[RMDB]
RNA sequence: GGGAACGACUCGAGUAGAGUCGAAAACCAUUUGGAUUAAGAGAAGGAACUGUUGAUUUUAGUAUGUAUGGACUAUUUAAAAUGUCAAUGAAUCCUAACUUAGAGGCUUCUGAGUAUGGAGCAGCAAAAUCACUGAUGCAUUCGUGCAUCAGUGAUUAAAAGAAACAACAACAACAAC
Reactivity to DMS in 0.01 (KOAc 150mM, MgCl2 10mM, bicine 150mM(pH8.5), 24C), signal-to-noise 2, nucleotides 027 to 126: c020c000a200u040u000u010g010g020a130u020u010a030a010g000a070g000a100a040g000g020a030a110c070u010g000u000u000g030a060u000u030u000u010a000g020u030a050u010g000u060a200u030g000g000a060c010u000a050u010u020u020a030a000a020a140u070g010u010c000a050a040u010g010a070a090u010c000c000u000a100a180c000u030u000a030g000a090g000g010c060u000u020c060u020g000a130g000u050a090u000g010g010a010g000c020a050g020c280a040a050
Reactivity to 2A3 in 0.01 (KOAc 150mM, MgCl2 10mM, bicine 150mM(pH8.5), 24C), signal-to-noise 2, nucleotides 027 to 126: c000c000a050u230u010u130g170g070a080u150u000a120a160g000a000g080a150a080g070g000a000a050c060u090g040u010u040g020a120u000u080u050u000a140g000u040a180u300g110u050a070u090g140g070a000c000u000a040u130u110u050a150a030a020a000u130g090u030c050a000a000u170g000a160a070u010c000c000u000a020a040c010u080u030a080g030a070g110g180c020u040u000c000u060g060a090g100u180a080u160g030g000a010g000c000a000g020c010a040a020

Notes
Structure probing data (DMS and 2A3) for a 177-nucleotide construct. 2A3 adducts were read by reverse transcription with SuperScript II with manganese. For 2A3, 1,117 sequencing reads were counted. For DMS the reverse transcriptase was MarathonRT. Conditions: 150 mM KOAc, 10 mM MgCl2 and 150 mM bicine (pH 8.5), 24 C. It was measured as part of the RMDB library OK1LIB.